[RMDB]
RNA sequence: GGGAACGACUCGAGUAGAGUCGAAAAGCUCACUUUUCACUGGGGGAAUGCAGAUAGUAGACACAUACAUCUAUAGUAUCAGUAAGUGCUAAUAGAAAAAUGAAGCAGGUGAGAUGGAUCAUGCUGAUGUGUUGAAUCAGUUCGCUGAUUCAACACAAAAAGAAACAACAACAACAAC
Reactivity to 2A3 in 0.01 (KOAc 150mM, MgCl2 10mM, bicine 150mM(pH8.5), 24C), signal-to-noise 2, nucleotides 027 to 126: g030c010u010c040a110c080u070u050u040u060c050a030c120u100g010g000g000g000g000a040a050u090g070c000a010g030a040u100a030g100u040a020g040a010c060a010c000a090u060a070c050a010u000c020u020a050u030a070g010u000a060u100c030a040g090u150a230a000g010u010g040c030u030a150a110u050a110g110a000a120a000a000a000u120g010a060a000g000c000a000g070g020u040g010a040g010a000u030g030g000a030u050c050a030u100g110c030u040g020a020
Reactivity to DMS in 0.01 (KOAc 150mM, MgCl2 10mM, bicine 150mM(pH8.5), 24C), signal-to-noise 2, nucleotides 027 to 126: g000c030u010c050a110c090u010u000u000u000c080a070c070u000g020g010g020g020g000a130a110u000g020c030a080g000a070u010a070g010u000a070g010a100c080a050c070a100u000a100c120a090u000c020u000a020u010a060g030u000a010u020c060a090g030u000a050a100g000u010g000c010u000a040a120u000a040g000a030a010a080a080a040u000g000a130a080g000c030a020g010g010u010g000a070g020a060u000g000g010a040u000c070a050u000g010c050u010g020a150
An RNA of 177 nucleotides, treated with 2A3 and DMS and read out base by base. The data come from the RNA Mapping Database (RMDB), library OK2TST. Reactivities are given for positions 27 through 126. The 2A3 profile rests on 1,004 reads. For DMS, 1,765 sequencing reads were counted.